[RMDB]
RNA sequence: GGGAACGACUCGAGUAGAGUCGAAAAUUAUGAGACCACUGAGAGCAGAAUCAAAAGGGAGUUUGAGUCAUAUGGUGCAAUCAAACGGGUUCGAUUGGUUACUGACACUGUGACAAAUAAGCCCAGGCACAGUAUACGGUUUCGACCGUAUACUGUGAAAAGAAACAACAACAACAAC
Reactivity to 2A3 in 0.01 (KOAc 150mM, MgCl2 10mM, bicine 150mM(pH8.5), 24C), signal-to-noise 3, nucleotides 027 to 126: u020u010a040u110g100a020g030a040c070c000a010c080u030g030a070g020a010g160c020a010g020a090a020u040c040a090a030a000a000g020g020g000a070g000u030u050u070g070a020g040u050c020a020u070a120u300g180g010u060g030c050a020a060u010c010a020a040a060c040g090g030g000u110u130c050g030a020u000u010g030g000u050u040a160c010u030g100a030c020a000c110u050g010u020g040a010c000a040a120a010u060a020a040g010c020c000c000a020g100g020
Reactivity to DMS in 0.01 (KOAc 150mM, MgCl2 10mM, bicine 150mM(pH8.5), 24C), signal-to-noise 5, nucleotides 027 to 126: u010u000a060u010g000a210g000a120c050c030a040c050u010g000a110g020a110g010c030a060g000a060a040u000c060a020a040a140a180g010g010g010a090g000u000u010u000g020a100g010u010c060a050u000a070u000g010g020u010g000c070a060a040u010c050a010a030a080c060g010g020g000u010u010c050g000a160u000u000g010g020u000u000a060c050u000g020a130c090a070c090u010g020u010g010a030c050a040a090a060u010a040a060g010c000c000c000a100g010g010